RNA sequence: GGGAACGACUCGAGUAGAGUCGAAAAAAGGAAAGGUCCUCUGUUUUCUUAUGCAUAGCAUCCAAUGUAAAAUGAAUGUAGCUCUCUUCUUUGACCUUACUCUUAUUUGCAUACUUUAAUGGGUGUAAUCAUAGAAAUGUUGCAUAUUCAGCAUAACCGUAAGAAACCGAUUCGUCGGUUUCUUACGAAAAGAAACAACAACAACAAC
Reactivity to DMS in 0.01 (KOAc 150mM, MgCl2 10mM, bicine 150mM(pH8.5), 24C), signal-to-noise 2, nucleotides 027 to 156: a030a070g020g010a100a050a110g000g020u000c030c040u000c050u010g010u010u000u010u010c000u000u020a110u000g000c050a100u000a280g040c000a030u000c020c010a080a050u000g030u000a090a060a130a130u000g030a090a050u010g010u000a060g040c040u010c020u000c020u000u000c050u000u000u010g010a120c000c020u000u000a060c030u010c020u010u000a130u000u020u000g000c030a080u000a040c100u010u020u000a100a100u000g000g050g070u000g020u000a030a060u000c070a080u000a070g000a070a040a140u000g020u000u000g020c000a110u000a110u000u010c060a110g000c010a120u000a080a130c120
Reactivity to 2A3 in 0.01 (KOAc 150mM, MgCl2 10mM, bicine 150mM(pH8.5), 24C), signal-to-noise 4, nucleotides 027 to 156: a000a000g080g020a100a090a000g050g010u020c020c010u030c040u030g110u100u110u020u000c030u050u050a030u080g020c010a040u030a100g020c010a030u040c040c040a110a070u070g010u110a090a120a080a100u100g040a100a020u080g030u050a030g000c010u000c010u000c010u130u050c000u060u030u110g040a040c010c000u020u050a040c020u020c020u070u080a090u140u110u070g010c010a070u070a260c050u140u080u180a150a090u140g010g010g000u020g000u050a050a030u070c010a010u010a050g030a040a100a020u070g010u050u000g020c010a010u060a110u190u090c050a040g070c060a040u140a090a040c040